The data come from the RNA Mapping Database (RMDB), library OK2TST. This 177-nucleotide RNA was probed chemically with 2A3 and DMS. For DMS the reverse transcriptase was MarathonRT. For 2A3 the reverse transcriptase was SuperScript II with manganese.
RNA sequence: GGGAACGACUCGAGUAGAGUCGAAAAGGACUGGGCAGCCUGAUGUCGUGGAUGUUCUAUGUCGGUCUGAUCAUUACCGUUGCUGACGUGCUGGUCGCGCUCGCAUUGACCAACUACGGGGCAAAGAUCUACUUCAUGCUUUCGAGCAUGAAGUAGAAAAAGAAACAACAACAACAAC
Reactivity to 2A3 in 0.01 (KOAc 150mM, MgCl2 10mM, bicine 150mM(pH8.5), 24C), signal-to-noise 3, nucleotides 027 to 126: g050g020a020c080u090g000g040g000c020a020g020c010c030u080g040a090u110g050u080c060g060u090g040g060a100u060g020u050u060c040u040a090u110g060u050c020g000g020u020c040u070g020a070u090c040a060u030u150a080c030c050g050u030u050g020c030u050g090a130c020g000u020g000c000u010g000g020u020c010g000c000g010c090u070c040g000c020a060u050u220g020a020c000c010a010a000c010u150a010c030g010g000g000g030c000a010a040a050g060a040
Reactivity to DMS in 0.01 (KOAc 150mM, MgCl2 10mM, bicine 150mM(pH8.5), 24C), signal-to-noise 4, nucleotides 027 to 126: g010g020a060c070u000g020g020g000c020a070g000c060c030u020g000a090u000g010u000c060g030u000g040g010a080u010g010u010u010c050u010a090u000g000u000c050g020g010u000c050u000g010a100u010c070a100u000u000a110c080c030g010u000u000g000c030u020g000a100c040g020u010g010c050u000g010g010u000c020g020c150g000c110u010c200g020c060a130u000u000g000a040c020c010a030a040c040u000a030c050g020g000g000g000c070a050a080a080g000a140